[RMDB]
RNA sequence: GGGAACGACUCGAGUAGAGUCGAAAAGAUAUGGAGCGUUGGGAGCCUCGUCUGCUAUCUAAGACAGGCUAUCGGAAACGAUAGCUCGAGAUAGACCAGACGAGGCUUUGAUCAACGCUCCUAAGUCGUUAGAUUUAGAGUUCGCUCUAAAUCUAACAAAAGAAACAACAACAACAAC
Reactivity to DMS in 0.01 (KOAc 150mM, MgCl2 10mM, bicine 150mM(pH8.5), 24C), signal-to-noise 5, nucleotides 027 to 126: g000a090u010a300u020g010g000a010g020c000g030u000u000g000g000g000a000g010c000c000u010c000g010u000c000u000g010c010u000a000u000c010u010a240a170g020a220c300a150g000g000c000u000a010u000c000g010g000a210a110a180c000g000a010u000a000g010c000u000c060g020a020g020a020u000a000g000a090c300c040a020g010a020c000g000a000g000g000c000u020u010u000g010a100u000c010a010a010c000g010c010u000c000c000u000a000a080g000u000c100